[RMDB]
RNA sequence: GGGAACGACUCGAGUAGAGUCGAAAACAAGGGUUAACUAAUGUGGGGAGCCUCUUUUGGCAUUAGGUAUGAAGAUGGCUGUAGAUAGUUGUAGACAGUGUGGACUGGGGCCUCGAGACUGGGCAGAGAGGUGUCAGCUCUUUCCUCUGAGCAGAGGCUAAUCAUCAGGUUUCGACCUGAUGAUUAGAAAAGAAACAACAACAACAAC
Reactivity to 2A3 in 0.01 (KOAc 150mM, MgCl2 10mM, bicine 150mM(pH8.5), 24C), signal-to-noise 1, nucleotides 027 to 156: c040a050a020g080g060g010u060u120a030a060c020u050a210a100u130g060u040g000g000g080g000a010g090c040c030u090c010u040u090u070u100g020g000c000a040u050u180a080g020g010u210a120u170g020a010a030g030a040u030g000g000c010u010g050u040a020g010a140u090a020g040u050u070g040u010a030g060a020c030a080g030u000g000u050g100g010a020c010u020g050g010g020g000c010c000u020c100g070a080g020a010c100u100g000g030g070c040a000g030a000g010a000g000g000u060g170u080c040a040g010c000u000c000u070u110u020c000c080u030c090u000g130a110g030c080a020g030a000g000g020